[RMDB]
RNA sequence: GGGAACGACUCGAGUAGAGUCGAAAAAAACCCGUUCAACCGCCCAUCCCAAUACUGUAGUACUUCGGUAUCGCAGCCCUCCGCCGCGCCCCGCCCGAACGCUGCGGUGGUCGCCCACUCGUGCAGGCUCCCGUUGGGAAUUCGUUCCCAACGGGAGAAAAGAAACAACAACAACAAC
Reactivity to 2A3 in 0.01 (KOAc 150mM, MgCl2 10mM, bicine 150mM(pH8.5), 24C), signal-to-noise 1, nucleotides 027 to 126: a000a000a030c030c000c000g010u120u090c010a050a020c020c020g030c000c010c000a020u000c000c000c000a060a070u140a130c040u080g040u120a090g030u030a090c040u000u110c070g030g010u040a040u030c070g020c030a030g000c000c000c000u060c010c010g020c020c020g070c000g010c010c000c010c000g010c020c020c010g020a040a020c020g050c060u020g000c000g000g020u010g000g060u100c000g040c000c010c000a100c010u010c020g040u050g040c040a020g060g010
Reactivity to DMS in 0.01 (KOAc 150mM, MgCl2 10mM, bicine 150mM(pH8.5), 24C), signal-to-noise 1, nucleotides 027 to 126: a070a040a190c010c000c000g030u000u000c080a170a160c010c010g000c130c000c000a100u080c010c000c050a180a000u030a040c010u000g030u000a070g010u000a040c100u000u030c130g000g000u000a110u000c110g110c010a010g010c080c040c000u000c040c000g000c010c010g030c070g000c080c010c020c000g040c020c020c020g020a080a110c150g000c020u010g000c080g010g010u000g050g010u000c060g000c040c000c000a060c000u060c040g080u000g060c140a080g000g040
An RNA of 177 nucleotides, treated with 2A3 and DMS and read out base by base. For DMS, 1,168 sequencing reads were counted. The RNA was probed in 150 mM KOAc, 10 mM MgCl2 and 150 mM bicine (pH 8.5) at 24 C. The 2A3 profile rests on 851 reads. It was measured as part of the RMDB library RFM100. For DMS the reverse transcriptase was MarathonRT.